[RMDB]
RNA sequence: GGGAACGACUCGAGUAGAGUCGAAAAGAUAUGGAGCAUCGGACCGAGCGAAGAACAUUCGUCGGAAACGACGAAUGGGAGCUCAGGUCCGAGUGCUCCUAAGUCAAAAUCGUAGGUUCGCCUACGAGCAAACAUACAACUUCGGUUGUAUGUUUGCAAAAGAAACAACAACAACAAC
Reactivity to DMS in 0.01 (KOAc 150mM, MgCl2 10mM, bicine 150mM(pH8.5), 24C), signal-to-noise 2, nucleotides 027 to 126: g010a090u000a300u000g000g000a000g000c000a040u000c020g000g010a020c000c000g000a010g000c020g010a160a140g010a130a170c020a000u000u000c000g000u000c000g000g000a130a090a200c000g000a020c000g000a010a000u000g010g000g000a110g070c000u020c000a070g030g000u020c000c000g020a010g000u010g040c000u000c000c000u000a000a080g000u010c050a050a070a130a200u000c000g000u020a010g010g010u010u010c300g000c010c000u020a000c000g000a070
Reactivity to 2A3 in 0.01 (KOAc 150mM, MgCl2 10mM, bicine 150mM(pH8.5), 24C), signal-to-noise 2, nucleotides 027 to 126: g020a030u050a040u220g010g000a010g030c020a000u030c020g000g010a000c010c010g020a000g000c000g300a300a030g010a100a000c000a020u000u000c000g000u000c000g040g000a060a060a030c000g000a000c000g020a030a040u010g000g010g040a020g010c020u030c120a060g020g020u040c000c000g030a000g000u000g000c000u040c010c010u000a010a020g000u010c020a000a000a030a300u040c000g000u000a020g080g090u090u060c300g080c100c000u000a000c010g010a030

An RNA of 177 nucleotides, treated with DMS and 2A3 and read out base by base. Conditions: 150 mM KOAc, 10 mM MgCl2 and 150 mM bicine (pH 8.5), 24 C. Values cover nucleotides 27 to 126. The 2A3 profile rests on 3,029 reads.